[RMDB]
RNA sequence: GGGAACGACUCGAGUAGAGUCGAAAAGAUAUGGACGAUGUGGACAUGAUUGGUUCGGAAACGAAGAAGAUCAACAGCCAUUUCGUCCUAAGUCAAACACCAGAAGUUGUUCGCAACUUCUGGUGAAUCAUACGAUGACCUUCGGGUCAUCGUAUGAAAAAGAAACAACAACAACAAC
Reactivity to 2A3 in 0.01 (KOAc 150mM, MgCl2 10mM, bicine 150mM(pH8.5), 24C), signal-to-noise 3, nucleotides 027 to 126: g000a010u020a010u050g000g000a010c000g000a010u020g000u010g010g000a070c100a260u190g030a040u030u080g050g240u060u000c010g000g010a020a020a010c000g000a000a020g020a030a010g010a010u030c080a200a290c090a220g020c000c010a000u000u000u020c000g000u000c000c000u000a010a000g000u000c010a050a070a070c010a020c000c010a000g000a010a010g010u010u040g040u090u300c300g020c200a010a000c000u010u000c010u000g030g000u000g010a000a030
Reactivity to DMS in 0.01 (KOAc 150mM, MgCl2 10mM, bicine 150mM(pH8.5), 24C), signal-to-noise 3, nucleotides 027 to 126: g000a030u000a040u000g000g000a010c010g020a020u000g030u000g000g010a040c120a090u000g000a000u000u000g000g020u000u000c010g010g000a000a030a030c000g040a020a000g010a300a300g010a000u000c000a090a090c240a090g010c010c000a010u000u000u000c000g000u000c000c000u000a000a040g000u000c000a130a110a210c000a000c000c020a000g010a010a010g010u000u000g000u000u030c230g000c010a000a020c000u000u000c020u000g010g000u000g000a010a050
Description:
Structure probing data (2A3 and DMS) for a 177-nucleotide construct. Values cover nucleotides 27 to 126. 2A3 adducts were read by reverse transcription with SuperScript II with manganese. The DMS profile rests on 2,322 reads. DMS (dimethyl sulfate) methylates the pairing face of unpaired adenines and cytosines. For DMS the reverse transcriptase was MarathonRT. For 2A3, 3,997 sequencing reads were counted.